[RMDB]
RNA sequence: GGGAACGACUCGAGUAGAGUCGAAAAACUUUUAGCGUUUGCAAGACGCUGUUCUUGCAUUGAUCUGGAUUUAGCGCACGGAGGUCCGAAAUCCAGAUCAACAUUUCGGACCUCCGCGCUAAUAAAAAUCUAUACGCACUUUCGAGUGCGUAUAGAUAAAAGAAACAACAACAACAAC
Reactivity to DMS in 0.01 (KOAc 150mM, MgCl2 10mM, bicine 150mM(pH8.5), 24C), signal-to-noise 2, nucleotides 027 to 126: a070c050u020u000u010u000a080g010c060g010u000u000u010g030c030a010a040g010a030c000g030c210u000g020u010u010c010u010u000g000c010a040u020u020g010a120u000c070u000g020g000a120u000u000u000a000g010c000g020c070a080c170g020g030a030g030g010u000c000c000g010a000a010a010u000c150c160a110g010a120u010c220a050a100c180a050u000u000u000c010g010g000a020c000c000u000c000c000g000c000g000c010u000a000a000u010a020a040a060a130
Reactivity to 2A3 in 0.01 (KOAc 150mM, MgCl2 10mM, bicine 150mM(pH8.5), 24C), signal-to-noise 1, nucleotides 027 to 126: a000c030u170u190u170u220a020g020c030g060u030u130u040g000c010a000a000g000a000c040g070c300u130g070u080u010c000u000u000g010c010a000u000u100g050a170u070c100u100g170g030a110u020u010u000a000g000c000g000c010a040c150g010g000a000g000g000u000c010c000g000a000a010a000u010c090c030a060g000a050u050c000a000a030c010a000u040u000u000c000g000g030a010c000c000u000c000c000g000c010g020c000u000a000a000u010a000a130a010a010
Chemical mapping of a 177-nucleotide RNA with DMS and 2A3. The reactions ran in a buffer of 150 mM KOAc, 10 mM MgCl2 and 150 mM bicine (pH 8.5), at 24 C. 2A3 adducts were read by reverse transcription with SuperScript II with manganese. DMS adducts were read by reverse transcription with MarathonRT. The 2A3 profile rests on 1,295 reads.